[RMDB]
RNA sequence: GGGAACGACUCGAGUAGAGUCGAAAACAAGAUGUCUAUAAGAGUCUUACCAUAGUUGACAUUCCACAGAGUUUGACUUUUUCAUAUGAUGGGUUACGUGGCGCAAUACGUAAAGCUAAAGAUUAUGUAACGCAGAAGUUCGCUUCUGCGAAAAGAAACAACAACAACAAC
Reactivity to 2A3 in 0.01 (KOAc 150mM, MgCl2 10mM, bicine 150mM(pH8.5), 24C), signal-to-noise 4, nucleotides 027 to 129: c070a010a060g020a030u120g210u300c000u000a000u000a030a080g000a000g000u000c010u000u010a020c000c000a030u040a000g030u020u120g060a030c050a070u080u050c030c020a110c040a070g070a040g050u040u070u130g010a070c000u010u070u000u100u090c010a010u030a020u110g050a030u020g010g030g030u030u000a030c000g020u040g040g060c130g010c110a050a050u060a080c020g020u010a030a000a010g020c000u070a110a060a010g050a000u020u020a010u070g050u030a060a020
Reactivity to DMS in 0.01 (KOAc 150mM, MgCl2 10mM, bicine 150mM(pH8.5), 24C), signal-to-noise 3, nucleotides 027 to 129: c300a060a260g000a000u070g070u080c000u030a090u020a010a230g020a090g020u020c010u000u040a250c040c000a120u070a020g080u000u000g000a000c130a130u000u000c030c080a100c130a160g020a080g050u000u000u000g050a080c140u020u010u010u070u010c040a000u050a060u050g010a150u040g040g030g040u000u000a000c000g030u040g010g050c110g030c090a080a080u030a100c070g030u050a010a090a050g010c050u020a000a000a000g040a150u090u030a000u040g010u040a080a130
Chemical mapping of a 170-nucleotide RNA with 2A3 and DMS. DMS adducts were read by reverse transcription with MarathonRT. Reactivities are given for positions 27 through 129. For DMS, 9,153 sequencing reads were counted. Source: RMDB library 15KLIB, as collected in RNAgym.